[RMDB]
RNA sequence: GGGAACGACUCGAGUAGAGUCGAAAAGAUAUGGAUUAUGGGAGCUACUUGUCGGAAACGACAAUUAGCAUCGAUCAUACUGUCCUAAGUCAAAAGCAUUAGGAGACCUUCGGGUCUCCUAAUGCAACUAUUGUCUUUGGUUCGCCAAAGACAAUAGAAAAGAAACAACAACAACAAC
Reactivity to DMS in 0.01 (KOAc 150mM, MgCl2 10mM, bicine 150mM(pH8.5), 24C), signal-to-noise 6, nucleotides 027 to 126: g010a090u000a170u010g010g020a050u000u000a070u010g010g000g010a060g010c000u000a000c140u000u000g020u000c010g010g010a080a070a210c000g010a010c000a010a000u000u000a000g010c000a130u000c100g010a050u000c000a020u000a020c300u010g010u000c010c010u010a060a120g000u010c120a060a070a120a130g010c010a000u000u000a000g010g000a010g010a010c000c000u000u010c220g020g000g010u000c000u000c000c000u000a000a000u000g000c010a010a040
Structure probing data (DMS) for a 177-nucleotide construct. The RNA was probed in 150 mM KOAc, 10 mM MgCl2 and 150 mM bicine (pH 8.5) at 24 C. It was measured as part of the RMDB library TTRDEL.